[RMDB]
RNA sequence: GGGAACGACUCGAGUAGAGUCGAAAAUGGCGUCAGCGAAGGAGGCCCACAAAGCUGCACAGCAGGCUGUUGCUCAGGCCAGGCGCGAAGAAGCCGAAGCCAAGCAGAAUGUGGAGCGGCUCAGGAAAAGAUCCCUUUCUUUCGAGAAAGGGAUCUUAAAAGAAACAACAACAACAAC
Reactivity to DMS in 0.01 (KOAc 150mM, MgCl2 10mM, bicine 150mM(pH8.5), 24C), signal-to-noise 2, nucleotides 027 to 126: u020g020g030c050g000u020c060a070g040c090g010a080a080g000g000a130g010g010c040c050c050a110c100a100a130a030g010c000u000g030c060a040c170a280g000c000a040g000g010c010u020g020u000u010g050c160u000c200a110g000g010c010c060a190g010g020c030g000c130g000a090a130g020a080a150g040c020c020g000a150a140g000c000c010a080a100g000c000a050g000a070a050u000g020u010g010g000a160g050c000g050g030c040u000c050a050g000g010a040a040